An RNA of 177 nucleotides, treated with 2A3 and DMS and read out base by base. It was measured as part of the RMDB library M2PK50. The reactions ran in a buffer of 150 mM KOAc, 10 mM MgCl2 and 150 mM bicine (pH 8.5), at 24 C.
[RMDB]
RNA sequence: GGGAACGACUCGAGUAGAGUCGAAAACUGACUAGGUUCGCCUAGUCAGAAAUAAAACGAGCAAAAGCAUGAGCUCCUAAAAAUCAUGCAAGACGAAAGUCAAAACUCGUUACUUCGGUAACGAGAAGGUAACGAAUAAGUUCGCUUAUUCGUUACCAAAAGAAACAACAACAACAAC
Reactivity to 2A3 in 0.01 (KOAc 150mM, MgCl2 10mM, bicine 150mM(pH8.5), 24C), signal-to-noise 6, nucleotides 027 to 126: c000u000g000a000c000u000a000g000g040u050u030c190g070c060c010u010a000g000u000c000a000g000a000a010a000u120a010a070a010a030c120g010a010g000c020a070a080a210a020g000c000a010u010g000a000g010c000u020c020c010u200a270a140a020a010a020u030c010a000u010g010c030a020a030g020a010c030g030a080a020a020g010u010c000a020a020a020a080c000u000c000g000u000u000a000c000u020u040c220g100g000u010a000a010c000g000a000g000a000a020
Reactivity to DMS in 0.01 (KOAc 150mM, MgCl2 10mM, bicine 150mM(pH8.5), 24C), signal-to-noise 3, nucleotides 027 to 126: c000u020g000a010c000u000a000g000g020u010u000c200g020c000c000u000a000g010u010c000a000g000a050a060a090u000a090a090a140a150c220g000a010g010c010a060a060a100a130g000c000a000u000g000a030g010c010u000c010c240u000a030a030a020a020a050u000c010a000u000g030c000a120a100g000a030c020g010a110a090a160g020u000c010a110a070a080a110c000u000c010g000u000u000a000c000u000u030c130g020g010u000a000a010c000g010a010g000a030a020